An RNA of 177 nucleotides, treated with 2A3 and DMS and read out base by base.
The 2A3 profile rests on 4,085 reads.
DMS adducts were read by reverse transcription with MarathonRT.
The data come from the RNA Mapping Database (RMDB), library M2PK90.
[RMDB]
RNA sequence: GGGAACGACUCGAGUAGAGUCGAAAAGCUCAGUGUGUGUCGCCCCGUCGUCUAGUGCUGGUUCUAGGGCUGGGGCGUCAGCAUCCAGGUCUGACGCGACGGGCAGUAUCUCGCCAUCAACGAUAAACAGGAAGCAUUAUUUCGAUAAUGCUUCCUGAAAAGAAACAACAACAACAAC
Reactivity to 2A3 in 0.01 (KOAc 150mM, MgCl2 10mM, bicine 150mM(pH8.5), 24C), signal-to-noise 3, nucleotides 027 to 126: g040c020u030c060a070g020u010g010u040g010u020g040u110c020g020c000c000c010c010g030u020c020g020u000c020u010a000g030u020g180c120u110g130g070u180u040c030u040a030g030g000g030c030u100g050g010g000g000c010g000u000c010a000g020c000a050u050c040c050a030g070g040u020c030u050g050a040c030g000c050g030a040c020g010g030g030c030a020g020u030a070u120c070u020c030g030c050c000a160u100c040a070a060c040g090a110u110a150a150a020
Reactivity to DMS in 0.01 (KOAc 150mM, MgCl2 10mM, bicine 150mM(pH8.5), 24C), signal-to-noise 4, nucleotides 027 to 126: g010c030u000c040a110g010u000g010u010g020u000g030u000c030g010c030c010c010c000g010u000c040g010u010c030u010a020g020u000g010c060u000g020g000u010u000c030u010a050g010g000g010c030u000g020g010g010g010c000g010u000c030a070g020c100a080u010c090c080a090g000g000u000c020u010g010a090c080g000c040g020a040c060g020g010g010c050a050g010u010a050u000c040u000c070g000c030c040a080u010c140a050a060c080g010a090u010a050a070a140